Notes: Chemical mapping of a 207-nucleotide RNA with DMS and 2A3. Reactivities are given for positions 27 through 156. The RNA was probed in 150 mM KOAc, 10 mM MgCl2 and 150 mM bicine (pH 8.5) at 24 C. It was measured as part of the RMDB library OK3TST.

[RMDB]
RNA sequence: GGGAACGACUCGAGUAGAGUCGAAAAUUCGGUCCUCAAUCAGAUCCCGGAUCGUCGGGUGGUUGUCUACCAUUCGUGGCCUUUCUCUGCGUCCGGCACCUGGUGUGCCGUCUACCGUUGGAUGUCACUUGACCUUACGUGGUGCCACCGACAAACGCACCAUUUACAAAUUCGUUUGUAAAUGGUGAAAAGAAACAACAACAACAAC
Reactivity to DMS in 0.01 (KOAc 150mM, MgCl2 10mM, bicine 150mM(pH8.5), 24C), signal-to-noise 3, nucleotides 027 to 156: u000u000c060g000g020u000c010c010u010c080a110a120u000c140a100g010a110u000c010c040c050g020g000a040u000c060g010u000c040g010g020g010u000g040g010u000u010g010u000c070u010a090c050c020a110u000u000c090g040u010g010g000c060c080u000u000u000c040u010c040u000g000c060g030u000c110c020g000g000c000a020c010c040u000g000g000u010g030u000g020c010c000g010u000c030u010a070c090c050g030u000u000g030g000a080u000g000u000c030a050c050u000u000g020a090c050c020u000u010a100c080g010u000g020g020u000g010c010c000a050c020c000g010a080c030a060a110a080c100g010
Reactivity to 2A3 in 0.01 (KOAc 150mM, MgCl2 10mM, bicine 150mM(pH8.5), 24C), signal-to-noise 7, nucleotides 027 to 156: u070u040c030g020g000u020c010c020u080c080a080a170u110c060a080g070a130u090c000c020c000g020g000a070u060c060g050u020c040g050g030g070u040g000g020u090u140g100u110c080u090a050c020c020a060u070u120c070g010u030g030g000c010c030u040u150u050c060u010c020u060g050c040g030u010c040c000g000g000c010a010c010c040u190g190g030u240g020u010g110c000c000g010u010c050u040a080c030c020g020u020u050g010g010a040u020g020u010c010a010c000u050u150g110a110c010c040u110u170a080c100g030u030g020g010u010g000c000c000a030c010c000g030a030c040a020a060a020c080g000